[RMDB]
RNA sequence: GGGAACGACUCGAGUAGAGUCGAAAAACGACGUCGUGUUGACUGCGUCCUCGCUGCUGGUCAGCAACGUCAAGGCGCGUGCUUUGGGUUACAGUGGAUAUGGUUUGUACUCGACCGGGACGCUGACCCUCGCACGCGUAUUCGUACGCGUGCGAGGAAAAGAAACAACAACAACAAC
Reactivity to 2A3 in 0.01 (KOAc 150mM, MgCl2 10mM, bicine 150mM(pH8.5), 24C), signal-to-noise 1, nucleotides 027 to 126: a000c040g010a080c000g010u110c040g000u040g040u080u130g000a030c040u040g000c000g010u110c000c000u020c000g030c000u120g010c040u040g090g000u130c010a010g000c030a100a050c000g030u000c040a000a000g150g000c080g000c010g050u120g010c000u140u140u020g090g000g000u120u120a020c010a020g030u020g040g050a070u000a130u300g170g000u090u110u100g070u070a120c080u010c100g100a010c000c000g040g060g020a020c000g000c010u000g030a010c000